An RNA of 177 nucleotides, treated with 2A3 and DMS and read out base by base. For DMS, 11,805 sequencing reads were counted. The 2A3 profile rests on 3,799 reads. For DMS the reverse transcriptase was MarathonRT.

RNA sequence: GGGAACGACUCGAGUAGAGUCGAAAAUGUCCAUGGCCCAGCAGUAGAUCUGGCCGCUGGGGAGGUGCCACCAGGCCCCCGGGCCCAAGGCGCAGCACGCGCCCGGCUCCGGGGGGGUCUUCGCGGGAACCGUAUAGGGAUUCGUCCCUAUACGGUUAAAAGAAACAACAACAACAAC
Reactivity to 2A3 in 0.01 (KOAc 150mM, MgCl2 10mM, bicine 150mM(pH8.5), 24C), signal-to-noise 3, nucleotides 027 to 126: u170g030u040c010c010a090u090g090g030c030c020c030a040g000c030a040g050u160a030g010a160u070c050u060g080g000c040c020g050c050u060g000g020g040g030a040g060g030u110g020c020c030a050c010c040a030g070g010c000c010c000c000c000g000g000g000c010c000c010a030a010g010g000c000g000c010a020g170c060a050c160g000c010g000c000c000c000g010g000c070u060c060c010g000g000g000g000g000g000g000u020c010u030u060c060g000c020g040g010g010
Reactivity to DMS in 0.01 (KOAc 150mM, MgCl2 10mM, bicine 150mM(pH8.5), 24C), signal-to-noise 4, nucleotides 027 to 126: u050g010u000c020c020a100u030g020g010c030c010c010a080g050c060a120g020u000a070g000a060u010c050u010g000g010c030c020g000c060u000g010g000g000g010a060g010g000u010g010c030c000a080c030c090a140g010g000c010c010c000c000c010g010g000g000c030c010c030a160a080g010g010c010g040c010a070g020c240a180c160g010c010g010c000c020c060g000g010c000u020c010c020g010g000g010g010g000g000g010u010c030u010u000c060g000c050g000g000g000